[RMDB]
Source information:
This 170-nucleotide RNA was probed chemically with DMS and 2A3. It was measured as part of the RMDB library 15KLIB. DMS adducts were read by reverse transcription with MarathonRT. The 2A3 profile rests on 3,845 reads. The DMS profile rests on 7,723 reads. High 2A3 reactivity points to a flexible backbone, as in loops and unpaired stretches.
RNA sequence: GGGAACGACUCGAGUAGAGUCGAAAAUGACGACGAGUGGGCUGCUGCAGUUGAUGAAGCGUUCCCUCUCGAUGAAGCAGAAGAUGUUACUGAAUCUGUGCAAGAAGAAGCACAACCAGUAGAAGUAGGCCCUGCGACUUCGGUCGCAGGAAAAGAAACAACAACAACAAC
Reactivity to DMS in 0.01 (KOAc 150mM, MgCl2 10mM, bicine 150mM(pH8.5), 24C), signal-to-noise 3, nucleotides 027 to 129: u030g020a180c100g050a050c080g000a040g010u060g020g000g000c280u030g000c040u020g010c060a160g030u030u030g010a230u020g000a110a060g020c030g050u020u040c070c010c000u040c050u020c030g050a090u010g030a170a110g010c010a000g000a100a080g000a140u060g000u030u000a080c050u090g040a120a120u030c110u020g050u000g020c020a080a110g020a120a130g030a060a040g020c020a060c070a000a070c000c000a000g090u020a030g000a120a020g000u030a060g000g000c080
Reactivity to 2A3 in 0.01 (KOAc 150mM, MgCl2 10mM, bicine 150mM(pH8.5), 24C), signal-to-noise 3, nucleotides 027 to 129: u220g000a030c030g000a020c050g000a010g030u020g000g020g070c020u050g010c000u030g010c040a100g000u060u020g100a120u060g090a070a020g050c040g000u120u100c010c010c010u000c000u000c000g040a040u020g010a010a020g040c020a030g010a020a000g050a060u150g030u190u000a000c020u020g030a070a060u050c060u110g000u040g010c040a040a020g050a090a040g060a090a000g100c000a000c000a000a010c070c000a020g000u000a000g020a090a020g020u060a020g040g020c000